[RMDB]
RNA sequence: GGGAACGACUCGAGUAGAGUCGAAAAUCACUUGAGCCCAGAAGUUCAAGACCAGCCUGGGCAACAUGGCAAAACCCCAUCUCUACCAAAAAUACAAAAAUUAACUGGACAUGGUGGCGCGCACCUGUAGUCCCAGCUACUUAGGAGGCUGACAUGGCACUAACUGUCUUUUCGAAGACAGUUAGUGAAAAGAAACAACAACAACAAC
Reactivity to 2A3 in 0.01 (KOAc 150mM, MgCl2 10mM, bicine 150mM(pH8.5), 24C), signal-to-noise 3, nucleotides 027 to 156: u060c010a020c060u040u080g030a020g010c000c020c000a000g080a120a040g020u100u100c140a080a030g030a140c020c030a010g050c000c000u010g000g050g000c010a010a010c040a030u050g030g020c040a030a050a020a080c020c010c010c010a030u030c030u000c010u050a060c020c040a060a060a040a070a050u170a120c090a040a080a080a060a070u150u080a070a060c020u050g010g010a010c020a040u080g020g050u040g010g050c040g000c000g030c060a040c000c020u020g030u040a030g000u030c000c010c010a000g000c000u040a040c010u090u090a040g030g030a020g060g000c020u010g040a020c010a040u060g060g010
Reactivity to DMS in 0.01 (KOAc 150mM, MgCl2 10mM, bicine 150mM(pH8.5), 24C), signal-to-noise 1, nucleotides 027 to 156: u000c070a080c000u000u000g000a210g030c000c030c010a100g000a100a030g020u000u000c030a050a060g000a110c040c030a080g030c000c010u030g010g000g080c000a030a020c040a030u040g010g050c000a070a040a040a040c000c000c010c030a050u000c030u030c000u000a120c040c050a030a050a090a050a110u000a180c060a000a040a040a040a070u010u010a050a060c020u000g010g000a090c030a050u000g040g020u000g050g020c040g000c050g080c020a060c000c000u000g030u000a050g000u000c010c010c020a100g000c040u000a010c050u010u010a050g020g020a120g000g000c030u000g000a030c080a080u010g000g030